[RMDB]
RNA sequence: GGGAACGACUCGAGUAGAGUCGAAAAGUUAACACUUAUUUACGUGAAUACCAAUGAAAUUACAGAUGAGAACAUCUACUAUCUACUUAAGUUAUGAAUCUUCCCCAAAAUUCAUAACAUUUCUCCUUCUACACCCCCCAUUCGUGGGGGGUGUAGAAAAAGAAACAACAACAACAAC
Reactivity to 2A3 in 0.01 (KOAc 150mM, MgCl2 10mM, bicine 150mM(pH8.5), 24C), signal-to-noise 1, nucleotides 027 to 126: g050u030u190a170a000c000a000c000u030u130a080u100u190u110a030c080g050u020g070a060a030u030a160c010c010a000a020u050g090a000a000a080u220u100a140c150a030g060a010u060g010a020g070a270a070c050a030u010c010u010a000c000u060a200u090c100u050a090c020u110u190a030a020g000u000u010a000u000g010a000a000u000c020u220u270c020c020c000c000a000a030a000a030u010u000c000a000u000a000a000c000a000u000u030u000c000u050c000c000u030
This 177-nucleotide RNA was probed chemically with 2A3.
Values cover nucleotides 27 to 126.
The reactions ran in a buffer of 150 mM KOAc, 10 mM MgCl2 and 150 mM bicine (pH 8.5), at 24 C.